[RMDB]
RNA sequence: GGGAACGACUCGAGUAGAGUCGAAAACUUUACAAGUGAACCACCCGUAACAUAUUCACCAGCUACAAUUUUAGCUGGUAGUGUCUACACUAAUAGCUGCCUUGUAUCGUCUGAUGGACAACCUGGCCAUGGAACACUUCUUCGGAAGUGUUCCAUGAAAAGAAACAACAACAACAAC
Reactivity to 2A3 in 0.01 (KOAc 150mM, MgCl2 10mM, bicine 150mM(pH8.5), 24C), signal-to-noise 2, nucleotides 027 to 126: c000u040u080u080a070c040a110a060g000u020g080a100a040c010c020a030c040c040c060g010u040a030a010c000a050u050a120u140u270c040a020c010c000a010g000c000u030a030c080a300a300u120u180u080u120a000g000c000u000g000g000u000a000g000u010g010u030c060u060a040c020a030c040u050a010a140u070a110g050c050u020g050c040c010u010u070g020u030a060u060c010g070u030c050u070g110a100u170g060g000a000c030a020a020c000c010u010g040g020c010
Reactivity to DMS in 0.01 (KOAc 150mM, MgCl2 10mM, bicine 150mM(pH8.5), 24C), signal-to-noise 1, nucleotides 027 to 126: c000u000u000u010a090c090a070a060g000u000g020a180a170c060c100a090c090c060c140g000u010a030a030c090a100u000a100u000u000c150a060c000c000a020g000c000u060a000c300a140a070u000u000u030u000a010g000c000u020g000g000u000a000g030u000g010u020c040u010a020c030a100c140u000a010a090u000a110g020c090u000g010c030c050u010u040g010u000a000u000c070g000u020c030u010g000a170u010g060g000a000c080a080a090c030c030u000g000g050c150